[RMDB]
RNA sequence: GGGAACGACUCGAGUAGAGUCGAAAAAGGUUUCUAUCCAAACUUUGAAAUAUCUUUUGACUUUAUAUUUUACAUGCAUGCAUGUGUGUUCAUGAUGGGGAGAGAAAGGAAUGUUCGCAUUUGGGUUAGCUAGAUAUAGGUUCGCCUAUAUCUAGCUAAAAGAAACAACAACAACAAC
Reactivity to 2A3 in 0.01 (KOAc 150mM, MgCl2 10mM, bicine 150mM(pH8.5), 24C), signal-to-noise 1, nucleotides 027 to 126: a010g100g010u030u060u000c030u070a080u040c040c020a020a000a050c060u130u130u100g000a000a070a040u070a080u040c000u050u160u020u020g030a010c000u060u150u020a110u090a120u100u080u020u030a000c000a000u040g070c060a050u120g090c060a110u060g000u050g050u010g000u040u060c050a050u080g030a040u080g000g010g010g000a090g000a010g000a070a000a000g060g010a050a080u090g020u040u030c060g000c060a020u000u010u100g080g000g000u020u010
Reactivity to DMS in 0.01 (KOAc 150mM, MgCl2 10mM, bicine 150mM(pH8.5), 24C), signal-to-noise 2, nucleotides 027 to 126: a060g010g030u000u010u000c010u010a090u000c100c100a040a100a130c110u010u010u010g010a040a050a060u000a100u010c030u000u000u000u000g000a180c040u000u000u000a040u000a060u010u000u010u010a060c040a030u000g020c060a040u020g010c060a050u000g040u000g030u000g000u010u000c070a030u000g010a060u000g000g000g020g020a040g020a140g010a010a020a030g010g010a080a060u000g010u010u000c040g010c110a080u000u000u000g000g000g020u000u000